An RNA of 177 nucleotides, treated with 2A3 and DMS and read out base by base. The data come from the RNA Mapping Database (RMDB), library OK1LIB.
RNA sequence: GGGAACGACUCGAGUAGAGUCGAAAACGAGCGAACCUUGGCCGAAGCAACAACGCUUGCAGACAGAGCGGUCUUUUCUGCACUUACCGCGCAGCUUGAGCCGGGACAUAAAGCGGCGCUGGACCGCACCUCCGGCACGAUUCGUCGUGCCGGAGGUAAAAGAAACAACAACAACAAC
Reactivity to 2A3 in 0.01 (KOAc 150mM, MgCl2 10mM, bicine 150mM(pH8.5), 24C), signal-to-noise 2, nucleotides 027 to 126: c040g000a030g080c010g040a070a060c030c050u050u140g040g000c040c010g070a030a000g060c010a010a040c000a060a070c160g000c050u010u090g010c010a000g000a070c010a030g080a010g100c000g070g070u050c040u000u100u000u060c010u020g000c030a020c070u060u110a080c070c030g010c000g000c030a010g000c010u100u070g030a000g000c010c000g000g020g060a010c020a040u300a010a130a000g010c000g000g050c010g010c030u060g000g060a050c000c000g000c000
Reactivity to DMS in 0.01 (KOAc 150mM, MgCl2 10mM, bicine 150mM(pH8.5), 24C), signal-to-noise 1, nucleotides 027 to 126: c070g000a260g000c030g060a010a070c010c020u000u030g000g070c040c070g020a100a050g000c000a230a040c040a010a160c000g000c080u000u030g070c020a000g030a010c130a040g000a030g010c000g000g000u000c030u000u080u080u010c000u000g080c050a070c100u000u150a060c240c190g000c020g010c050a040g000c120u000u050g000a150g000c000c000g000g020g050a090c190a080u000a080a150a030g010c000g000g000c000g050c080u000g070g010a050c000c020g000c040